An RNA of 177 nucleotides, treated with DMS and 2A3 and read out base by base. For DMS the reverse transcriptase was MarathonRT. The RNA was probed in 150 mM KOAc, 10 mM MgCl2 and 150 mM bicine (pH 8.5) at 24 C. 2A3 adducts were read by reverse transcription with SuperScript II with manganese.
RNA sequence: GGGAACGACUCGAGUAGAGUCGAAAACGAAGCGGAAGACGCAAAGAAGCAGCCCCUUGGCGUCACCCCCCGCACGGCUACCCAUUAUCUCUUUGCUUCCGAAUAUUUCACCGAAGAAGUGCGCCGAAGGUAAUAAUUUAUUCGUAAAUUAUUACCUAAAAGAAACAACAACAACAAC
Reactivity to DMS in 0.01 (KOAc 150mM, MgCl2 10mM, bicine 150mM(pH8.5), 24C), signal-to-noise 5, nucleotides 027 to 126: c100g010a100a120g010c030g000g010a150a080g020a090c090g020c020a040a040a030g000a120a130g030c050a080g010c010c020c070c040u000u000g010g010c010g010u010c030a230c030c040c030c060c010c030g010c050a090c050g010g000c050u000a080c010c030c030a110u010u010a070u010c060u000c030u000u000u000g010c020u000u000c010c020g000a110a070u010a090u010u000u010c070a080c050c050g000a080a100g010a090a080g000u000g010c070g030c040c040g020a090
Reactivity to 2A3 in 0.01 (KOAc 150mM, MgCl2 10mM, bicine 150mM(pH8.5), 24C), signal-to-noise 1, nucleotides 027 to 126: c020g040a070a010g020c030g000g070a070a000g050a040c020g000c020a000a020a100g050a110a020g050c040a030g010c000c000c000c000u020u070g040g020c000g040u040c030a170c010c010c020c000c010c000g000c000a010c020g020g000c010u030a060c000c000c000a030u090u080a110u080c040u010c000u040u050u060g050c020u030u030c000c000g010a020a000u060a070u060u080u040c070a070c000c020g000a040a020g020a050a000g030u030g030c010g010c020c010g040a010